Chemical mapping of a 177-nucleotide RNA with 2A3. Values are in units of 0.01, from 0 to 300, in steps of 10.

[RMDB]
RNA sequence: GGGAACGACUCGAGUAGAGUCGAAAACAUGUCAUUGAUUCGUAUGGGUCAGUGACAACUGGGUAUCAUAUACUUAAGGCUGGGACUGUUAAGCAACUUAUUGACUUUUCAUCAAAUGAAUUGCAGAGUGCCCCAAUCAGUUCGCUGAUUGGGGCACAAAAGAAACAACAACAACAAC
Reactivity to 2A3 in 0.01 (KOAc 150mM, MgCl2 10mM, bicine 150mM(pH8.5), 24C), signal-to-noise 1, nucleotides 027 to 126: c030a020u050g000u000c000a000u000u000g060a000u140u000c120g090u300a190u300g050g040g000u000c000a000g000u000g000a000c000a000a000c000u070g010g000g000u020a010u150c130a110u100a040u040a080c070u040u180a040a000g020g000c010u000g000g000g020a030c000u000g030u000u000a000a050g050c000a140a060c000u020u050a040u110u070g160a240c150u010u000u240u270c010a110u060c060a090a030a100u100g050a090a070u120u040g040c000a000g020a010

The RNA was probed in 150 mM KOAc, 10 mM MgCl2 and 150 mM bicine (pH 8.5) at 24 C. The data come from the RNA Mapping Database (RMDB), library OK1LIB. For 2A3 the reverse transcriptase was SuperScript II with manganese.